[RMDB]
RNA sequence: GGGAACGACUCGAGUAGAGUCGAAAAGUACGGAUUCGUCCGUACAAAAAAGAUAUGGACGUGAACUACAGUCGAUUGGUGACGAAGAACUCGGAAACGAGGGAGUCACCACUCGACUGCACGUCCUAAGUCAAAAAUACCGUGUUCGCACGGUAAAGUUACUGAGGGUAUUCGUACCCUCAGUAACAAAAGAAACAACAACAACAAC
Reactivity to 2A3 in 0.01 (KOAc 150mM, MgCl2 10mM, bicine 150mM(pH8.5), 24C), signal-to-noise 5, nucleotides 027 to 156: g000u000a000c000g000g030a040u050u150c230g060u020c120c000g000u010a020c020a000a070a000a000a010a010g070a030u090a030u090g000g000a000c010g010u020g020a110a050c090u120a080c300a000g000u000c000g000a000u000u000g000g000u010g000a000c010g080a180a080g020a040a010c000u000c000g030g030a080a060a060c020g000a010g000g020g000a010g010u000c000a000c000c000a000c000u010c000g000a000c000u000g000c000a000c000g000u000c000c000u000a000a000g010u010c020a000a010a080a050a060u080a030c010c010g000u000g030u020u040c280g020c090a000c010g010g000u040a040a020a010
Reactivity to DMS in 0.01 (KOAc 150mM, MgCl2 10mM, bicine 150mM(pH8.5), 24C), signal-to-noise 2, nucleotides 027 to 156: g010u000a010c010g030g010a090u010u020c260g020u010c000c030g000u000a000c000a000a020a120a140a140a110g040a110u000a210u000g030g010a030c020g110u000g010a130a190c020u020a130c000a000g000u000c010g020a040u010u000g020g020u000g020a010c000g000a140a160g000a120a180c000u020c000g030g010a140a120a300c010g010a020g000g000g050a250g010u000c000a000c010c000a000c030u000c000g020a010c000u000g000c020a010c030g010u030c000c000u000a000a080g020u000c090a030a050a090a070a120u000a040c010c000g010u000g000u010u000c300g000c020a000c000g000g020u000a010a010a180